[RMDB]
Structure probing data (DMS and 2A3) for a 177-nucleotide construct. High DMS reactivity at an A or C suggests that its Watson-Crick edge is free. The reactions ran in a buffer of 150 mM KOAc, 10 mM MgCl2 and 150 mM bicine (pH 8.5), at 24 C. Values cover nucleotides 27 to 126.
RNA sequence: GGGAACGACUCGAGUAGAGUCGAAAACAACGGUUUUGAUCAUAGAUGCUCUCUAAUGAUUGACUCUCUGGUGACCUCGACCCACUGCUACGAAGAACAGAGAAUGACUAUUCGUGGUGGAUUACCACGAUCCCCAUCAUUUCGAUGAUGGGGAUCGAAAAGAAACAACAACAACAAC
Reactivity to DMS in 0.01 (KOAc 150mM, MgCl2 10mM, bicine 150mM(pH8.5), 24C), signal-to-noise 2, nucleotides 027 to 126: c120a090a090c190g020g000u010u000u000u010g010a010u000c030a040u000a030g030a050u000g000c300u020c050u010c020u020a030a040u000g010a090u000u000g000a060c080u000c020u000c060u010g030g010u000g010a050c050c050u000c050g000a200c030c010c030a150c040u000g010c040u020a040c000g010a030a010g000a070a050c030a030g010a150g000a090a110u000g010a040c080u000a180u010u010c000g040u000g000g030u000g010g000a140u000u000a090c080c080a150
Reactivity to 2A3 in 0.01 (KOAc 150mM, MgCl2 10mM, bicine 150mM(pH8.5), 24C), signal-to-noise 2, nucleotides 027 to 126: c020a000a050c070g050g000u030u010u050u170g020a020u060c000a010u030a050g040a070u180g040c020u060c000u010c020u160a280a080u060g060a030u000u100g030a030c010u000c010u020c040u090g090g000u030g060a060c000c040u000c020g040a050c010c010c010a040c020u030g000c020u010a000c000g020a040a000g000a030a000c010a020g070a000g150a300a090u090g050a070c120u040a020u030u040c000g010u000g010g010u020g040g030a040u040u200a050c040c030a050